[RMDB]
RNA sequence: GGGAACGACUCGAGUAGAGUCGAAAAUUAAACGCAACGACUCGAGUAGAGUCGAAAACAAAACGACUCGAGUAGAGUCGAAAACCCAACGACUCGAGUAGAGUCGAAGCGUACGCAAGCGAAAAAACGUAUACAUAAGGUUCGCCUUAUGUAUACGAAAAGAAACAACAACAACAAC
Reactivity to DMS in 0.01 (KOAc 150mM, MgCl2 10mM, bicine 150mM(pH8.5), 24C), signal-to-noise 3, nucleotides 027 to 126: u000u010a090a150a080c080g000c060a040a180c010g010a010c010u000c000g000a070g000u000a100g000a010g010u000c000g000a010a020a070a070c000a000a000a030a040c010g010a000c000u000c000g010a100g010u000a050g000a010g000u000c000g000a010a030a040a020c000c000c000a120a150c010g010a000c000u000c000g000a130g010u010a060g000a010g010u000c000g000a020a190g000c030g010u000a060c200g010c170a090a070g020c120g020a000a060a070a040a040a080
Reactivity to 2A3 in 0.01 (KOAc 150mM, MgCl2 10mM, bicine 150mM(pH8.5), 24C), signal-to-noise 3, nucleotides 027 to 126: u080u030a140a080a030c300g000c300a000a000c000g000a000c000u000c000g010a010g030u040a020g020a000g000u000c000g000a000a000a000a010c000a000a000a000a010c000g000a000c000u000c000g010a010g060u080a010g030a000g000u000c000g000a000a000a000a000c000c000c000a000a020c000g000a000c000u010c010g040a050g120u130a020g060a000g000u000c000g000a010a010g010c000g010u050a030c130g030c100a050a100g090c040g200a080a030a000a010a000a020
Structure probing data (DMS and 2A3) for a 177-nucleotide construct. Source: RMDB library M2PK90, as collected in RNAgym. 2A3 adducts were read by reverse transcription with SuperScript II with manganese. The DMS profile rests on 18,049 reads. Conditions: 150 mM KOAc, 10 mM MgCl2 and 150 mM bicine (pH 8.5), 24 C.